[RMDB]
RNA sequence: GGGAACGACUCGAGUAGAGUCGAAAAAAUUGGCGAUUAUUCCUGGUGGAGGUAUGAGUAGUUCACGCCCAUUCCUCAAAUCCUUGAUUUGGUCCUAGAAACAGGGCAUAAGGCAAAAUCAUGUUAAUUGGAAAGGCAACAUUUUGCGUAAAGAGACCGACUAGGCACGGUUCGCCGUGCCUAGUCGAAAAGAAACAACAACAACAAC
Reactivity to 2A3 in 0.01 (KOAc 150mM, MgCl2 10mM, bicine 150mM(pH8.5), 24C), signal-to-noise 1, nucleotides 027 to 156: a010a010u230u150g000g000c140g020a100u190u010a070u250u240c020c000u010g020g010u100g120g050a010g030g000u070a030u120g020a040g060u130a030g040u200u210c070a040c060g000c010c000c000a000u120u000c000c000u040c010a060a120a110u100c070c120u070u090g010a070u060u090u190g040g040u040c000c060u080a040g130a120a190a000c090a070g000g010g010c070a020u120a120a060g040g000c010a000a000a000a030u050c050a040u070g000u080u250a180a180u110u120g000g040a100a040a000g010g050c040a020a050c000a030u000u070u040u120g000c040g120u230a110a110a040g080a000g020a020c000

This 207-nucleotide RNA was probed chemically with 2A3. It was measured as part of the RMDB library OK3TST. High 2A3 reactivity points to a flexible backbone, as in loops and unpaired stretches. 2A3 adducts were read by reverse transcription with SuperScript II with manganese.